[RMDB]
RNA sequence: GGGAACGACUCGAGUAGAGUCGAAAAACGAGUCAUACGUGACUCGAUGGCUCUGCGAGGUCAGCUCAAGGUGGGUCUGGAUAUUGAGCAGGCCUGUCAGGGCGUUGAGCACGCAUACGUGCGUGCACUGGUUGUACGAUUUCGAUCGUACAACCAGAAAAGAAACAACAACAACAAC
Reactivity to 2A3 in 0.01 (KOAc 150mM, MgCl2 10mM, bicine 150mM(pH8.5), 24C), signal-to-noise 3, nucleotides 027 to 126: a010c030g000a000g020u010c010a030u040a140c280g100u070g010a000c000u000c000g020a050u030g150g000c000u000c010u000g000c030g070a020g000g000u000c000a000g000c000u000c030a030a030g110g030u130g050g090g100u150c100u180g130g050a100u060a090u160u020g000a020g020c010a020g000g010c000c000u030g040u100c000a000g000g010g000c040g030u070u180g050a030g010c010a000c010g000c000a020u030a090c180g090u050g010c000g000u000g000c000a000
Reactivity to DMS in 0.01 (KOAc 150mM, MgCl2 10mM, bicine 150mM(pH8.5), 24C), signal-to-noise 2, nucleotides 027 to 126: a100c030g000a020g020u000c010a040u010a080c180g060u010g000a030c000u000c010g000a050u020g000g000c000u020c020u000g020c110g020a030g010g000u000c000a070g020c000u000c000a020a030g000g060u010g020g000g020u000c080u000g000g020a150u030a110u000u030g000a090g000c000a040g000g000c000c000u000g000u000c010a020g010g000g010c010g020u010u000g000a090g000c000a000c010g000c000a010u000a090c240g050u010g020c000g010u000g000c000a080

Chemical mapping of a 177-nucleotide RNA with 2A3 and DMS. The RNA was probed in 150 mM KOAc, 10 mM MgCl2 and 150 mM bicine (pH 8.5) at 24 C.